[RMDB]
RNA sequence: GGGAACGACUCGAGUAGAGUCGAAAAGAAUGCCCAUUCGUGGGCAUUCCACCGCAGCGAACCCGAAAGGCAUUUUAUGCGUACGCUGGCGAAAGCCUAAAAAAGCUCCACUUUUCGAAGUGGAGAAAUUAGUAUUUCUCUUCGGAGAAAUACUAAUAAAAGAAACAACAACAACAAC
Reactivity to DMS in 0.01 (KOAc 150mM, MgCl2 10mM, bicine 150mM(pH8.5), 24C), signal-to-noise 4, nucleotides 027 to 126: g000a030a010u000g000c010c000c000a030u010u010c150g030u000g020g000g010c010a000u000u000c000c050a180c110c020g020c070a070g000c020g010a070a080c120c040c040g010a070a080a110g010g010c060a040u000u010u000u010a050u000g000c040g000u000a070c110g010c100u000g010g030c020g010a100a100a140g000c010c030u000a000a030a060a100a100a120g000c000u000c000c010a010c000u000u000u000u010c140g000a020a000g010u000g010g000a000g000a000a010
Reactivity to 2A3 in 0.01 (KOAc 150mM, MgCl2 10mM, bicine 150mM(pH8.5), 24C), signal-to-noise 3, nucleotides 027 to 126: g010a010a000u010g000c000c040c010a010u020u080c240g080u020g000g010g000c010a000u000u010c000c010a050c020c030g000c010a010g040c010g030a060a070c020c020c030g070a140a070a000g110g000c010a020u050u090u070u210a080u130g030c010g000u040a040c050g000c070u050g050g000c000g030a110a000a000g020c000c030u140a120a080a020a010a000a000g030c000u000c000c010a010c000u050u060u080u130c240g060a020a000g000u000g000g000a000g000a000a000